[RMDB]
RNA sequence: GGGAACGACUCGAGUAGAGUCGAAAACCCAAUUCAGAGCCAAGAACCCACCCAUCGGGGUCCGACGUUCCUACCCUUUCUUACCUGUGGCCGGCAUGGUCCCAGCCUCCUCGCUGGCGCCGGCUGGAUACCAUUCAGUUCGCUGAAUGGAAAAGAAACAACAACAACAAC
Reactivity to 2A3 in 0.01 (KOAc 150mM, MgCl2 10mM, bicine 150mM(pH8.5), 24C), signal-to-noise 9, nucleotides 027 to 129: c000c000c000a000a000u090u060c040a020g040a020g040c020c020a070a030g030a100a090c020c010c020a060c020c020c010a070u080c060g020g000g020g030u030c020c020g060a070c040g010u020u020c010c000u040a070c010c010c000u040u100u050c030u070u090a130c020c030u110g040u180g100g000c000c000g000g010c020a080u140g070g030u140c020c010c000a000g010c010c020u130c010c030u130c080g000c000u000g000g010c020g010c010c000g010g000c000u000g010g000a010u040a070
Reactivity to DMS in 0.01 (KOAc 150mM, MgCl2 10mM, bicine 150mM(pH8.5), 24C), signal-to-noise 9, nucleotides 027 to 129: c000c010c030a060a060u060u040c090a090g000a100g000c040c050a040a070g040a080a090c080c020c000a110c060c060c020a050u040c040g000g010g030g010u020c000c040g040a150c090g030u000u030c020c030u000a110c040c020c020u000u000u000c000u040u040a080c060c050u040g000u020g010g010c010c020g000g040c040a120u010g010g020u000c190c020c010a090g020c020c090u020c100c070u030c110g000c010u000g020g000c150g020c020c020g000g060c030u010g020g010a110u070a100
Chemical mapping of a 170-nucleotide RNA with 2A3 and DMS. It was measured as part of the RMDB library 15KLIB. For DMS, 68,754 sequencing reads were counted. The reactions ran in a buffer of 150 mM KOAc, 10 mM MgCl2 and 150 mM bicine (pH 8.5), at 24 C. 2A3 adducts were read by reverse transcription with SuperScript II with manganese.